[RMDB]
RNA sequence: GGGAACGACUCGAGUAGAGUCGAAAAAGUACAGACACAGCAUGCUUCGAAGGAAAAUAAAAGUCGAAUAGUGUGUCUGUAGAAUAAGACGAAACUUCGAGCAUGCGAAGAGAGAAAUCUCGAAAAAGGGAAGAUAGAAGUUCGCUUCUAUCUUCCCAAAAGAAACAACAACAACAAC
Reactivity to 2A3 in 0.01 (KOAc 150mM, MgCl2 10mM, bicine 150mM(pH8.5), 24C), signal-to-noise 4, nucleotides 027 to 126: a000g060u030a010c000a010g010a000c000a000c000a020g010c000a000u000g010c000u150u160c000g000a000a030g070g080a050a060a150a030u300a080a100a030a010g120u130c070g100a100a160u090a110g140u090g000u000g000u030c000u000g010u000a000g010a050a040u190a070a020g040a010c040g020a110a040a060c000u000u010c000g000a000g000c000a000u000g000c000g010a070a000g000a000g010a000g010a000a080a050u000c000u020c020g030a100a070a020a070a000
Reactivity to DMS in 0.01 (KOAc 150mM, MgCl2 10mM, bicine 150mM(pH8.5), 24C), signal-to-noise 3, nucleotides 027 to 126: a050g000u000a020c000a010g000a010c000a040c010a060g010c000a000u000g000c000u030u050c020g020a000a000g020g010a140a040a080a180u010a050a040a120a070g020u000c000g010a070a140u040a070g010u000g010u000g000u010c000u000g000u000a020g020a120a140u060a080a140g000a030c030g000a080a070a040c030u030u000c000g000a020g000c010a040u000g000c040g010a080a050g000a000g020a030g010a120a080a090u000c000u010c000g030a020a030a070a120a150